[RMDB]
RNA sequence: GGGAACGACUCGAGUAGAGUCGAAAAUAUGUUUGCAUCUAACAAACGUGUAUGGAUGAAAAAACAAGGUACUAAUGAAGUUAAGUCUGACAUGAGUAUUUUCAAUAUUCCAAGUGAUGAUUUAAACACAGUUAUUGGACGUACUAAAGAUAAAAAACUAUUUAGUCCCAUUCGUGGGACUAAAUAGAAAAGAAACAACAACAACAAC
Reactivity to DMS in 0.01 (KOAc 150mM, MgCl2 10mM, bicine 150mM(pH8.5), 24C), signal-to-noise 2, nucleotides 027 to 156: u000a070u000g010u000u000u000g000c020a090u020c130u000a110a140c060a060a060a090c040g020u000g040u000a070u000g010g070a160u010g000a000a050a070a080a070a090c070a060a070g010g030u000a110c050u000a050a070u000g000a130a120g000u000u000a080a060g030u000c040u000g000a160c100a080u020g010a030g030u000a010u010u000u000u010c060a010a120u000a130u010u010c030c050a050a170g030u000g000a090u010g010a140u000u000u000a070a060a090c060a040c030a140g010u000u000a010u000u010g000g000a070c060g010u010a090c010u000a080a130a090g000a160u060a020a030a100a090a050a140
Reactivity to 2A3 in 0.01 (KOAc 150mM, MgCl2 10mM, bicine 150mM(pH8.5), 24C), signal-to-noise 3, nucleotides 027 to 156: u200a070u060g010u010u030u050g050c030a020u050c050u080a040a050c000a120a110a030c100g080u050g050u060a140u120g060g050a020u020g100a090a050a040a000a000a030c050a040a040g090g000u070a060c010u060a040a100u140g030a020a020g040u060u050a070a010g030u000c000u060g090a050c030a160u090g020a030g010u000a000u020u060u000u000c010a010a030u020a060u110u070c060c070a120a050g030u010g090a120u020g040a010u040u190u290a030a060a000c030a000c000a020g000u020u030a030u040u030g000g000a000c000g000u010a000c010u040a000a070a030g100a040u250a020a160a010a020a010a000
Structure probing data (DMS and 2A3) for a 207-nucleotide construct. For DMS the reverse transcriptase was MarathonRT. 2A3 adducts were read by reverse transcription with SuperScript II with manganese. Source: RMDB library OK3TST, as collected in RNAgym.